[RMDB]
RNA sequence: GGGAACGACUCGAGUAGAGUCGAAAAGAAAGAGACUUUAUCAACUUGCCCAGCCAAAUGGCUUUAAGGCGUAGUAUACACAAUACAAUAGAGUUCUCAAACAUGCUUUGAACUAGUUAAUUGAUGAAUUAAAGAGUUGAGUUAAGGCUACAAUUAACAUCGUUUUACGAUUCGUCGUAAAACGAUGAAAAGAAACAACAACAACAAC
Reactivity to 2A3 in 0.01 (KOAc 150mM, MgCl2 10mM, bicine 150mM(pH8.5), 24C), signal-to-noise 6, nucleotides 027 to 156: g100a010a110a020g030a010g000a010c020u050u040u040a060u080c030a040a060c040u060u080g010c000c000c010a010g000c010c000a170a300a300u300g000g000c000u080u110u130a070a030g010g000c040g020u030a010g020u020a070u090a060c100a010c050a090a080u160a090c040a000a030u040a030g040a020g040u170u030c020u000c020a020a110a030c040a060u150g030c030u060u030u070g020a020a010c020u020a050g070u070u090a090a020u080u070g080a100u100g050a110a100u060u080a080a060a030g070a020g050u030u040g030a020g040u040u090a040a010g020g000c010u060a030c040a090a110u130u090a070a000
Reactivity to DMS in 0.01 (KOAc 150mM, MgCl2 10mM, bicine 150mM(pH8.5), 24C), signal-to-noise 3, nucleotides 027 to 156: g010a110a140a300g000a090g000a090c010u000u000u000a050u020c000a080a100c050u000u020g000c040c010c090a060g010c000c000a100a170a210u020g040g000c010u000u000u000a030a040g030g000c010g030u000a050g040u000a060u010a120c130a110c100a080a120u000a070c110a020a090u010a060g010a040g010u000u000c020u000c040a060a100a110c060a060u010g000c020u000u000u010g010a020a040c030u000a020g020u000u000a020a030u000u010g020a160u000g000a080a050u000u000a020a030a110g000a050g000u020u010g010a180g030u000u010a030a080g020g020c010u010a120c070a070a100u000u000a030a160